Source information:
Chemical mapping of a 177-nucleotide RNA with DMS and 2A3. Source: RMDB library RFM100, as collected in RNAgym. The reactions ran in a buffer of 150 mM KOAc, 10 mM MgCl2 and 150 mM bicine (pH 8.5), at 24 C. 2A3 adducts were read by reverse transcription with SuperScript II with manganese. Values cover nucleotides 27 to 126. For DMS, 1,304 sequencing reads were counted.

[RMDB]
RNA sequence: GGGAACGACUCGAGUAGAGUCGAAAAGGAGGGAAACCGACAGCCCGCAGCUUAUGCGAGGGGCGGGGUGUGCUCGCCUGUAGUCCCUGCCGUACGACCCGAAGCCGGGCGAUCUAGGCGGGGGCAGCGCGUUUAGAUGCUUCGGCAUCUAAACGCGAAAAGAAACAACAACAACAAC
Reactivity to DMS in 0.01 (KOAc 150mM, MgCl2 10mM, bicine 150mM(pH8.5), 24C), signal-to-noise 1, nucleotides 027 to 126: g010g000a080g030g000g010a180a140a040c000c020g040a120c070a020g030c000c000c010g000c000a300g000c010u000u040a210u080g000c020g000a230g000g040g020g040c020g000g000g000g000u000g020u060g010c000u000c010g010c010c000u000g030u010a050g040u000c080c010c000u000g000c030c010g000u010a210c010g010a150c010c000c010g010a300a090g010c150c060g000g000g060c000g000a060u000c190u000a110g030g000c000g010g000g000g000g020c010a060g000
Reactivity to 2A3 in 0.01 (KOAc 150mM, MgCl2 10mM, bicine 150mM(pH8.5), 24C), signal-to-noise 2, nucleotides 027 to 126: g000g000a000g030g020g030a000a070a030c000c000g080a020c040a010g000c000c000c000g010c000a050g040c050u300u300a060u240g010c000g060a140g000g000g000g040c000g010g000g000g000u050g000u120g010c030u000c000g060c010c010u110g040u060a000g030u030c000c000c000u000g000c000c000g030u050a030c030g300a300c010c000c030g100a150a130g300c190c050g000g000g000c000g000a030u000c060u130a050g000g030c000g000g000g000g030g000c000a010g000